[RMDB]
RNA sequence: GGGAACGACUCGAGUAGAGUCGAAAACUGACAAUGUUAAGUUCAACAGCACCCAGCCUGUUACAUUCUGGAGUACGCUCAUUACAUUAUUCAAUCCGAGUGUUAUCUGCGUACAGCUGAACGAAACCUGCGGUAACAAGAAUUACGCAACAACAUCACUAAGGGAGGAGUUCGCUCCUCCCUUAGUAAAAGAAACAACAACAACAAC
Reactivity to 2A3 in 0.01 (KOAc 150mM, MgCl2 10mM, bicine 150mM(pH8.5), 24C), signal-to-noise 2, nucleotides 027 to 156: c020u030g080a050c040a060a080u070g030u040u080a100a060g030u030u030c030a070a070c020a050g000c020a020c000c000c000a020g010c000c090u070g000u110u140a060c100a090u090u060c010u040g000g000a050g000u000a000c010g010c030u000c030a030u020u070a010c000a010u020u060a110u090u230c070a090a080u130c110c180g050a020g030u010g000u000u020a000u020c030u000g000c020g020u000a030c000a040g000c040u020g000a010a070c030g050a100a000a040c010c030u050g000c050g030g020u050a070a010c070a100a080g110a070a100u100u030a000c020g010c120a000a060c060a010a020c030a060u290c050
Reactivity to DMS in 0.01 (KOAc 150mM, MgCl2 10mM, bicine 150mM(pH8.5), 24C), signal-to-noise 1, nucleotides 027 to 156: c020u000g000a110c110a050a060u000g000u010u010a090a180g000u010u010c050a030a130c060a110g040c110a160c090c020c010a100g000c080c060u060g000u010u010a090c060a110u000u000c050u010g000g030a300g000u000a030c020g000c000u000c070a030u000u000a040c040a050u000u000a180u020u050c120a110a140u000c100c160g000a070g000u000g000u020u010a040u000c020u050g020c040g000u000a040c000a140g020c090u000g000a030a080c070g000a100a050a090c050c090u000g000c050g020g020u010a010a090c050a020a300g000a070a200u000u010a120c070g010c030a050a100c040a040a090c110a070u010c030

Source information: The data come from the RNA Mapping Database (RMDB), library OK3TST. Chemical mapping of a 207-nucleotide RNA with 2A3 and DMS. For 2A3, 942 sequencing reads were counted. The reactions ran in a buffer of 150 mM KOAc, 10 mM MgCl2 and 150 mM bicine (pH 8.5), at 24 C. DMS adducts were read by reverse transcription with MarathonRT.